RNA sequence: GGGAACGACUCGAGUAGAGUCGAAAAGAUAUGGAACUCCUCUCCAAGCCAUGAUGACCAGGCUUCGGAAACGAAGCCUGCAAGUGGUGGAGAGGGAGUUCCUAAGUCAAACUGCACUUCGGUGCAGGUAUGAACUGAGGUUCGCCUCAGUUCAUACAAAAGAAACAACAACAACAAC
Reactivity to 2A3 in 0.01 (KOAc 150mM, MgCl2 10mM, bicine 150mM(pH8.5), 24C), signal-to-noise 4, nucleotides 027 to 126: g030a020u090a070u190g010g000a000a010c000u000c000c000u060c000u000c010c020a200a160g140c020c000a040u080g120a230u090g020a090c040c010a000g010g010c000u000u000c010g000g000a010a020a020c000g000a000a000g000c000c000u010g000c030a140a070g010u010g020g050u130g030g020a010g020a030g030g000g010a000g000u000u010c000c010u000a030a010g000u000c030a070a090a110c010u010g010c000a000c010u070u120c300g140g000u000g000c010a000g040
Reactivity to DMS in 0.01 (KOAc 150mM, MgCl2 10mM, bicine 150mM(pH8.5), 24C), signal-to-noise 7, nucleotides 027 to 126: g000a050u000a300u010g000g010a010a010c000u000c000c000u000c000u010c000c000a200a200g030c000c000a010u000g010a070u000g000a170c300c010a020g000g010c010u000u000c000g010g000a130a090a140c010g010a020a010g000c000c000u000g000c010a010a040g030u000g000g030u000g000g000a050g010a030g030g020g000a010g010u000u000c000c000u010a020a060g010u000c030a100a140a300c010u010g000c000a020c000u000u020c150g020g020u000g010c000a000g000
Chemical mapping of a 177-nucleotide RNA with 2A3 and DMS. DMS (dimethyl sulfate) methylates the pairing face of unpaired adenines and cytosines. The data come from the RNA Mapping Database (RMDB), library TTRDES. For DMS, 7,462 sequencing reads were counted.